[RMDB]
RNA sequence: GGGAACGACUCGAGUAGAGUCGAAAAGGACUACCCGUCAGGGUUAAGGCCAUACGGACAGCCGGGUCCACUGCCAGAAAGAAAACAAAACAAAACAAAAACAAAACAAAACAAAAACAAAAGAAAAGGUAUUAUCCGGUUUCGACCGGAUAAUACCAAAAGAAACAACAACAACAAC
Reactivity to 2A3 in 0.01 (KOAc 150mM, MgCl2 10mM, bicine 150mM(pH8.5), 24C), signal-to-noise 1, nucleotides 027 to 126: g030g020a010c000u050a090c010c000c000g090u170c120a230g030g010g000u040u090a080a050g100g000c000c000a000u030a070c030g110g100a010c000a030g000c010c000g030g000g000u100c000c000a000c080u050g160c000c000a130g210a040a030a000g220a000a090a110a170c090a000a020a000a000c050a010a040a030a000c000a000a120a010a000a100c150a140a070a000a000c040a000a030a040a040c070a030a130a000a000a110c200a070a040a060a020g230a050a080a000a000